Structure probing data (DMS) for a 177-nucleotide construct. The reactions ran in a buffer of 150 mM KOAc, 10 mM MgCl2 and 150 mM bicine (pH 8.5), at 24 C. The DMS profile rests on 749 reads.
[RMDB]
RNA sequence: GGGAACGACUCGAGUAGAGUCGAAAAGAUAUGGACCCUGCUUUUGACGAACCCGCUUCGGAAACGAAGCCGGGUUCGAUAAGCAGGUCCUAAGUCAAAGUAAGUGUCUGUUCGCAGACACUUACAAGCCUACGAAGGUGUUCGCACCUUCGUAGGCAAAAGAAACAACAACAACAAC
Reactivity to DMS in 0.01 (KOAc 150mM, MgCl2 10mM, bicine 150mM(pH8.5), 24C), signal-to-noise 1, nucleotides 027 to 126: g010a000u010a300u010g000g000a040c060c110c060u000g020c000u000u000u020u000g040a160c200g010a000a020c000c010c000g000c000u030u000c000g010g010a060a050a240c000g000a000a010g010c050c040g040g020g000u000u000c000g000a020u000a010a010g020c010a070g000g010u000c000c000u000a030a090g000u010c040a110a080a200g000u000a000a010g020u000g000u000c000u010g010u010u020c250g040c020a010g010a010c000a000c000u000u000a000c030a090a080